Overview: Chemical mapping of a 177-nucleotide RNA with 2A3 and DMS. The reactions ran in a buffer of 150 mM KOAc, 10 mM MgCl2 and 150 mM bicine (pH 8.5), at 24 C.
RNA sequence: GGGAACGACUCGAGUAGAGUCGAAAAUGAUCGAGAGAUCUAACGAUGUACGCGAGUCGCGUGCACUGACUCGAGCGAAAGCUCGGUCGAAAGACCGCGUACAUCGGUCGGCAAGUGUACAGUCGACACUAUGGGUCGCAUUCGUGCGACCCAUAGUAAAAGAAACAACAACAACAAC
Reactivity to 2A3 in 0.01 (KOAc 150mM, MgCl2 10mM, bicine 150mM(pH8.5), 24C), signal-to-noise 1, nucleotides 027 to 126: u110g000a000u010c020g010a000g000a020g000a110u000c010u030a090a040c010g000a010u010g000u020a010c010g020c000g000a070g030u000c010g020c090g130u100g040c050a050c050u030g000a020c010u020c070g000a000g010c010g090a110a010a000g000c000u000c020g000g000u010c000g000a020a070a010g000a000c000c000g000c000g040u000a000c000a000u000c000g010g010u000c020g000g000c030a010a300g060u080g020u110a020c000a040g010u010c000g000a010c000
Reactivity to DMS in 0.01 (KOAc 150mM, MgCl2 10mM, bicine 150mM(pH8.5), 24C), signal-to-noise 3, nucleotides 027 to 126: u000g010a010u000c000g000a260g010a250g000a000u000c000u000a090a160c000g000a030u000g000u000a000c000g010c000g000a050g010u000c000g000c180g020u000g000c090a040c060u000g000a030c000u010c010g000a010g000c010g020a150a120a180g000c000u000c010g000g010u020c000g000a070a070a150g020a020c010c000g020c030g000u000a010c010a000u000c000g000g000u000c020g040g020c020a040a090g010u000g000u010a020c050a160g000u000c010g010a150c270

Overview: 2A3 adducts were read by reverse transcription with SuperScript II with manganese. Source: RMDB library OK2TRN, as collected in RNAgym.